An RNA of 177 nucleotides, treated with 2A3 and DMS and read out base by base. The data come from the RNA Mapping Database (RMDB), library M2PK50. For DMS, 790 sequencing reads were counted. The RNA was probed in 150 mM KOAc, 10 mM MgCl2 and 150 mM bicine (pH 8.5) at 24 C.
[RMDB]
RNA sequence: GGGAACGACUCGAGUAGAGUCGAAAAUAGCAGUCUUUCGAGACUGCUACAUUAAUAGUCGCUUGAAAACGAUCAAAACUAGCGACUAACAUAACGAUCGAAAAGACGCACCCUUCGGGGUGCGUAACAGACUGUUGAUGUUCGCAUCAACAGUCUGAAAAGAAACAACAACAACAAC
Reactivity to 2A3 in 0.01 (KOAc 150mM, MgCl2 10mM, bicine 150mM(pH8.5), 24C), signal-to-noise 1, nucleotides 027 to 126: u010a000g010c000a020g000u020c040u030u130u230c300g030a020g000a010c010u010g000c000u000a000c000a000u010u060a020a050u000a050g000u000c000g000c000u000u030g130a090a030a110a190c100g110a080u130c040a000a130a030a080c010u030a000g000c000g020a020c010u010a070a000c050a020u130a030a120c060g040a040u140c010g020a000a000a090a070g180a040c000g000c000a000c000c040c000u030u030c100g100g000g020g000u000g000c000g010u000a000a000
Reactivity to DMS in 0.01 (KOAc 150mM, MgCl2 10mM, bicine 150mM(pH8.5), 24C), signal-to-noise 1, nucleotides 027 to 126: u000a000g040c000a010g000u000c010u040u010u020c140g000a010g010a030c000u000g000c000u000a000c070a100u020u000a120a170u000a010g010u000c000g010c000u000u000g000a030a010a140a090c040g010a010u000c010a100a090a080a040c110u000a010g040c010g010a000c040u000a030a030c160a070u040a110a080c200g020a000u000c040g010a060a040a110a060g000a030c010g000c000a030c020c000c000u000u010c260g020g000g000g030u000g000c000g020u010a000a050